[RMDB]
RNA sequence: GGGAACGACUCGAGUAGAGUCGAAAAACCUUUGUGUAUGAUAGAUACGGGAGAGUCCGUGGUCCCAUUGGGACCAGAUCGCAUACUCGAAGAACGUAUCUGUUUGUACACUCUGGUAAAAGGGUGUUCUGUAUGGUUCGCCAUACAGAACACCCAACAAACGUUCAUGAUUCGUCAUGAACGUUUGAAAAGAAACAACAACAACAAC
Reactivity to 2A3 in 0.01 (KOAc 150mM, MgCl2 10mM, bicine 150mM(pH8.5), 24C), signal-to-noise 2, nucleotides 027 to 156: a000c010c000u010u010u030g000u000g010u010a020u040g010a020u010a010g020a010u010a000c010g000g030g000a050g000a010g050u020c110c090g060u040g000g000u000c030c000c080a220u160u300g000g000g010a010c000c010a000g040a100u180c060g010c130a110u110a230c010u010c000g110a190a020g020a030a000c000g000u000a000u000c010u000g040u020u050u080g010u000a000c000a000c000u010c010u000g030g030u060a100a140a080a040g000g010g000u000g000u000u000c000u030g000u010a010u010g020g030u050u040c190g010c030c000a000u000a000c000a000g000a000a000c000a010c000c000c010a000a010
Reactivity to DMS in 0.01 (KOAc 150mM, MgCl2 10mM, bicine 150mM(pH8.5), 24C), signal-to-noise 2, nucleotides 027 to 156: a020c010c000u000u000u000g030u010g000u010a020u010g020a020u010a000g020a020u000a000c000g000g010g020a150g000a090g040u000c110c020g010u000g050g000u020c000c010c020a300u000u000g040g030g000a030c010c010a030g000a060u000c040g000c110a160u000a110c020u000c000g000a160a160g010a150a170c020g020u000a010u010c000u000g020u000u000u000g010u000a030c030a010c030u020c010u010g000g010u000a010a080a060a120g020g020g050u000g000u010u000c030u000g020u000a000u000g000g020u010u000c300g050c020c000a030u010a010c000a000g000a000a000c000a010c000c000c000a000a000